[RMDB]
Background:
Structure probing data (DMS) for a 177-nucleotide construct. For DMS, 29,223 sequencing reads were counted. The RNA was probed in 150 mM KOAc, 10 mM MgCl2 and 150 mM bicine (pH 8.5) at 24 C.

RNA sequence: GGGAACGACUCGAGUAGAGUCGAAAAGAUAUGGAGCAUGCAGACAUGGAUUGAUAAAGCAUUCUCUGUAUCGGAAACGAUAUGGAGAAUGCUUUAUCAAUCCAACAGCUGUUGUGCUCCUAAGUCAGAUAUUCACAUAGUUCGCUAUGUGAAUAUCAAAAGAAACAACAACAACAAC
Reactivity to DMS in 0.01 (KOAc 150mM, MgCl2 10mM, bicine 150mM(pH8.5), 24C), signal-to-noise 9, nucleotides 027 to 126: g010a060u000a300u010g000g000a010g020c000a010u000g010c000a010g000a060c120a290u000g010g010a010u000u000g000a010u000a000a010a020g020c000a010u000u000c000u000c000u000g020u000a000u000c000g000g000a160a090a240c000g010a010u000a000u000g010g000a020g010a010a000u000g000c000u000u000u000a000u000c000a000a000u000c000c000a000a020c300a180g000c000u000g010u000u010g060u000g010c000u000c000c000u000a010a070g010u000c070a160